[RMDB]
RNA sequence: GGGAACGACUCGAGUAGAGUCGAAAAUAGUAAACGCAAGUCAUCAUCUUGCAUUGAUUACGUCCCUGCCCUUUGUACACACCGCCCGUCGCACCUACCGAUUGGAUAUUGUGACGAACCUUGCAGAGAAGCCAUAGGGAUUCGUCCCUAUGGCUUCAAAAGAAACAACAACAACAAC
Reactivity to DMS in 0.01 (KOAc 150mM, MgCl2 10mM, bicine 150mM(pH8.5), 24C), signal-to-noise 3, nucleotides 027 to 126: u010a020g020u030a000a020a090c140g010c000a020a030g010u010c220a160u020c300a070u040c040u030u000g040c000a190u000u040g000a070u020u000a040c050g000u000c000c000c010u020g020c020c010c080u000u000u000g000u010a120c090a020c060a030c050c020g000c130c010c040g010u000c050g000c080a070c060c050u020a090c110c040g030a110u010u010g000g000a130u040a070u020u000g010u020g000a030c130g040a080a090c040c060u020u000g000c120a140g000a220
Reactivity to 2A3 in 0.01 (KOAc 150mM, MgCl2 10mM, bicine 150mM(pH8.5), 24C), signal-to-noise 3, nucleotides 027 to 126: u150a000g080u070a000a030a000c090g030c000a000a020g050u110c020a100u010c030a050u050c120u000u000g020c000a010u020u160g170a050u030u020a000c030g090u050c000c000c000u040g000c000c000c000u090u070u090g110u100a040c020a000c000a000c000c020g010c000c000c000g030u040c080g010c010a040c000c000u060a060c000c030g130a120u030u130g030g030a010u040a030u120u170g010u000g000a020c010g040a040a020c000c030u020u110g060c040a060g050a000